[RMDB]
RNA sequence: GGGAACGACUCGAGUAGAGUCGAAAAGAAAGAAAGAGGAGUUCCUACAGGGGCGAGCUGGGAACACACGGUGAUGAGGCGGUCUGGUCUUUCGUGUGUUCUCAGGUCGCCCCUGCCGGGACUCUAAAUAGUUCAGCAUGUUCGCAUGCUGAACUAUAAAAGAAACAACAACAACAAC
Reactivity to DMS in 0.01 (KOAc 150mM, MgCl2 10mM, bicine 150mM(pH8.5), 24C), signal-to-noise 1, nucleotides 027 to 126: g010a060a060a120g000a050a080a070g000a110g000g000a010g000u000u000c000c020u000a300c030a030g010g010g060g000c000g000a000g030c000u000g010g020g030a000a000c000a000c020a030c010g000g020u050g000a070u040g010a060g000g010c120g040g040u060c170u030g010g000u010c000u000u030u050c000g000u000g020u000g000u040u000c000u000c020a000g000g010u000c000g000c000c000c000c000u000g000c000c300g010g000g000a000c000u000c000u010a000a070
Reactivity to 2A3 in 0.01 (KOAc 150mM, MgCl2 10mM, bicine 150mM(pH8.5), 24C), signal-to-noise 1, nucleotides 027 to 126: g070a020a030a010g110a040a060a010g040a060g020g000a010g000u000u040c010c000u000a010c020a000g000g020g000g000c030g010a040g090c020u000g000g000g000a000a000c020a000c000a000c020g070g000u150g030a240u150g020a040g020g020c030g030g160u160c160u250g080g000u010c030u030u080u060c020g020u010g000u000g010u000u020c000u000c000a000g000g000u000c000g010c000c000c000c000u010g000c000c020g000g000g000a000c000u010c000u010a020a050
An RNA of 177 nucleotides, treated with DMS and 2A3 and read out base by base. Values cover nucleotides 27 to 126. It was measured as part of the RMDB library RFM100. High DMS reactivity at an A or C suggests that its Watson-Crick edge is free.